[RMDB]
RNA sequence: GGGAACGACUCGAGUAGAGUCGAAAAGAUAUGGAUCCUGUAGCUUUUGACGCCUUAACAGUCGGAAACGACUGGGAGGGCGAUAAGCUACUGGAUCCUAAGUCAAAGAAUCGCUUCGGCGAUUCAAGGUCUAGAAAAACUUCGGUUUUUCUAGACCAAAAGAAACAACAACAACAAC
Reactivity to DMS in 0.01 (KOAc 150mM, MgCl2 10mM, bicine 150mM(pH8.5), 24C), signal-to-noise 2, nucleotides 027 to 126: g000a040u000a300u000g000g000a020u000c000c000u000g020u000a010g020c000u020u010u000u010g030a280c080g050c010c000u000u000a120a090c010a030g020u000c000g000g000a120a110a190c000g020a020c000u010g000g010g000a060g010g010g040c010g000a030u000a000a010g010c000u000a000c010u010g000g000a000u000c000c000u010a000a050g020u000c040a140a190a140g010a050a010u000c000g040c010u000u000c190g090g000c010g020a020u000u000c000a060a090
Reactivity to 2A3 in 0.01 (KOAc 150mM, MgCl2 10mM, bicine 150mM(pH8.5), 24C), signal-to-noise 2, nucleotides 027 to 126: g020a000u080a020u180g000g000a010u000c010c010u010g010u000a000g000c020u170u040u100u300g280a210c260g000c010c010u040u030a010a000c000a000g040u000c010g000g000a090a030a030c000g000a030c010u010g000g030g000a060g000g000g020c010g000a000u000a000a000g020c000u000a000c000u010g000g000a000u010c000c000u000a030a000g030u000c050a120a000a180g010a000a010u000c000g000c010u070u100c300g170g000c000g000a000u000u000c000a010a050
An RNA of 177 nucleotides, treated with DMS and 2A3 and read out base by base. The reactions ran in a buffer of 150 mM KOAc, 10 mM MgCl2 and 150 mM bicine (pH 8.5), at 24 C. Reactivities are rounded to 0.1 and cut off at 0 and 3.